[RMDB]
RNA sequence: GGGAACGACUCGAGUAGAGUCGAAAAGGAAACCGAGUCUUAAUAGGGCGACUUAGUAUCAUGUUGUAGACCCGAAACCAUGUGACCUACCCAUGAGCAGGUUGAAGGUGCGGUAAGACGCACUGGAGCCCCGUUAUAUGUUCGCAUAUAACGGGGCAAAAGAAACAACAACAACAAC
Reactivity to DMS in 0.01 (KOAc 150mM, MgCl2 10mM, bicine 150mM(pH8.5), 24C), signal-to-noise 1, nucleotides 027 to 126: g000g020a090a040a120c030c000g020a080g000u010c040u000u000a080a080u000a080g020g030g020c090g010a030c050u020u000a100g010u030a080u000c040a050u000g020u000u010g030u010a010g000a110c010c010c030g010a070a060a150c070c040a080u010g030u010g020a100c020c040u010a040c020c110c060a040u000g010a030g050c010a070g000g000u000u000g030a130a110g000g020u000g020c000g000g000u000a060a060g010a180c020g000c000a010c010u000g000g010a280
Chemical mapping of a 177-nucleotide RNA with DMS. It was measured as part of the RMDB library OK2TRN.